[RMDB]
RNA sequence: GGGAACGACUCGAGUAGAGUCGAAAAGGAUUGAUAAGCCUUUGUGCCCGGCAACCUUACUAUUUACUGGCUUGCUACUGUCGGCUCUUCAGGAGGCUAGUUUUCAAUGGCAAAAGGCAAGAACUCUGUUGGAAAGACACAUUCAAGAAGAGCGUUCACUAUGAAUCAAUUUCGAUUGAUUCAUAGUAAAAGAAACAACAACAACAAC
Reactivity to 2A3 in 0.01 (KOAc 150mM, MgCl2 10mM, bicine 150mM(pH8.5), 24C), signal-to-noise 6, nucleotides 027 to 156: g020g010a040u060u090g030a050u170a300a080g010c010c010u010u010u030g110u050g050c020c000c000g010g050c030a050a030c030c010u130u120a090c080u120a120u150u130u060a050c040u040g020g020c020u010u030g000c010u020a070c030u040g070u080c050g070g030c010u010c010u060u050c030a030g000g070a020g080g000c030u020a010g020u000u020u030u250c030a030a030u040g000g010c020a030a070a050a090g050g010c050a030a020g020a050a030c030u040c040u130g050u050u050g040g020a100a040a010g050a010c030a000c010a130u120u140c030a060a040g040a030a010g000a030g000c010g020u050u030c020
Reactivity to DMS in 0.01 (KOAc 150mM, MgCl2 10mM, bicine 150mM(pH8.5), 24C), signal-to-noise 5, nucleotides 027 to 156: g010g020a100u000u000g030a160u000a120a190g020c000c000u000u000u010g020u000g020c010c000c040g020g000c040a070a060c040c020u000u000a110c070u000a080u000u010u000a090c060u010g010g020c030u000u000g020c020u000a100c060u010g020u000c050g020g020c010u000c020u000u000c030a130g010g010a110g030g010c020u000a060g020u000u000u010u000c070a060a090u000g020g010c040a060a050a090a060g000g000c020a090a130g010a070a090c040u000c040u010g010u000u000g010g000a070a050a100g000a160c090a060c050a120u000u000c060a060a170g010a050a050g010a050g030c020g020u010u010c040
Annotation:
Structure probing data (2A3 and DMS) for a 207-nucleotide construct. Source: RMDB library OK3TST, as collected in RNAgym. The reactions ran in a buffer of 150 mM KOAc, 10 mM MgCl2 and 150 mM bicine (pH 8.5), at 24 C.